[RMDB]
RNA sequence: GGGAACGACUCGAGUAGAGUCGAAAACCUCAUGGGAAGAAGGUUCAGAGACUAGAUGGUUGUGGGUUGAACACGUUUAUCUGAAGUAUUUGAACGGUUCGGCUUAAGAUAUAGUCCAAUCCAAUGUGGAAACGCACUGGUCUGAAAGAUAGAAAAUGUUAAUGACUAAGUUCGCUUAGUCAUUAACAAAAGAAACAACAACAACAAC
Reactivity to DMS in 0.01 (KOAc 150mM, MgCl2 10mM, bicine 150mM(pH8.5), 24C), signal-to-noise 2, nucleotides 027 to 156: c020c010u000c080a120u000g010g040g020a090a080g020a090a060g010g020u000u000c060a110g010a170g010a090c040u000a050g010a070u000g010g020u000u000g000u000g020g010g050u000u000g020a050a010c050a080c100g000u000u010u000a040u000c040u000g010a080a090g030u000a060u000u000u020g030a040a100c060g010g000u000u000c020g020g000c000u000u000a070a060g000a110u010a060u000a080g010u010c010c020a030a060u000c000c010a040a030u010g020u000g000g000a110a040a170c060g010c010a040c030u000g000g020u000c040u000g000a060a040a060g000a100u000a130g010a100a060a080a110u000
Reactivity to 2A3 in 0.01 (KOAc 150mM, MgCl2 10mM, bicine 150mM(pH8.5), 24C), signal-to-noise 6, nucleotides 027 to 156: c000c000u060c030a130u150g030g030g010a040a060g030a030a020g050g020u080u070c060a020g050a010g000a080c020u020a010g010a110u090g060g020u050u040g030u090g020g010g010u010u010g010a000a010c270a020c120g010u030u030u020a090u010c080u090g120a120a020g050u110a160u070u140u100g040a020a010c000g020g000u020u020c000g000g010c010u030u060a070a020g040a040u070a020u050a160g040u020c030c010a010a020u000c010c000a030a050u070g030u050g040g030a110a040a000c030g010c010a010c030u020g000g010u000c000u010g040a070a080a030g050a020u120a040g080a030a110a010a000u040